[RMDB]
RNA sequence: GGGAACGACUCGAGUAGAGUCGAAAACAGUCAACGUGAAGGCGGGCCAGACCAUCGCCGCAUUCUACCAGAGCACCGUCAUGAUCUUUGGCACGAUGGCUCGCUACAUACUCAGAGUUAGGGAAAACAUAAAUUACCUGUUCGCAGGUAAUUUAUGAAAAGAAACAACAACAACAAC
Reactivity to DMS in 0.01 (KOAc 150mM, MgCl2 10mM, bicine 150mM(pH8.5), 24C), signal-to-noise 9, nucleotides 027 to 126: c120a110g010u000c070a070a090c100g010u010g020a130a100g010g020c010g010g000g010c020c040a100g000a120c110c080a060u000c080g020c050c040g000c100a060u000u000c070u000a100c060c040a070g000a050g010c100a050c040c030g010u010c110a060u000g000a060u000c030u010u000u000g010g010c050a060c100g010a100u000g010g010c020u000c030g010c030u000a040c070a070u000a070c030u000c030a110g010a060g010u000u000a080g000g010g000a080a070a080a190
Reactivity to 2A3 in 0.01 (KOAc 150mM, MgCl2 10mM, bicine 150mM(pH8.5), 24C), signal-to-noise 2, nucleotides 027 to 126: c030a010g120u080c040a040a040c060g030u050g100a110a040g070g020c000g000g020g020c010c030a030g030a090c030c030a080u110c050g030c050c010g020c010a020u120u040c040u080a090c020c030a020g010a010g060c050a030c090c020g120u110c050a120u120g070a100u060c040u080u070u050g030g000c050a010c090g060a070u040g000g000c010u010c010g000c000u040a020c010a050u100a020c010u030c050a040g020a030g090u050u090a120g040g000g040a040a080a030a020